[RMDB]
The record gives the reactivity of an RNA of 177 nucleotides to DMS and 2A3. The RNA was probed in 150 mM KOAc, 10 mM MgCl2 and 150 mM bicine (pH 8.5) at 24 C. 2A3 adducts were read by reverse transcription with SuperScript II with manganese. In probing experiments dimethyl sulfate is read out at A N1 and C N3, which are open when not base-paired.
RNA sequence: GGGAACGACUCGAGUAGAGUCGAAAAGUCGCCAUCGUGCUGAUCCAGCUUUCCGCGACGCUCGGCGUGCACGUCCUGGUGCAAGCGCACAUCACCGGCGCGGCCUACCGAUGCGCGCUGACGAUCGCGGUCGCGUAAGGUUCGCCUUACGCGACCGAAAAGAAACAACAACAACAAC
Reactivity to DMS in 0.01 (KOAc 150mM, MgCl2 10mM, bicine 150mM(pH8.5), 24C), signal-to-noise 2, nucleotides 027 to 126: g010u000c070g000c010c030a090u000c140g010u000g010c030u010g000a050u000c040c100a110g020c140u010u000u000c020c000g030c030g000a000c010g000c170u000c030g000g010c050g020u000g010c000a010c020g000u000c110c160u000g000g000u000g050c000a150a060g000c020g000c010a060c110a080u000c220a070c170c130g020g010c000g000c030g000g030c040c050u010a060c080c000g030a120u000g020c010g000c020g000c000u010g000a020c030g000a100u000c020g020
Reactivity to 2A3 in 0.01 (KOAc 150mM, MgCl2 10mM, bicine 150mM(pH8.5), 24C), signal-to-noise 1, nucleotides 027 to 126: g100u030c010g000c070c030a140u080c070g060u120g010c080u140g000a070u010c070c000a020g050c030u020u070u040c020c000g040c000g010a010c000g000c120u020c010g050g000c010g010u000g030c010a020c010g110u150c030c130u140g050g020u070g100c070a160a070g000c030g000c020a130c010a290u140c060a060c080c090g030g000c000g000c000g010g000c000c010u070a030c090c000g090a130u000g030c010g000c000g000c000u000g020a000c000g100a120u040c010g000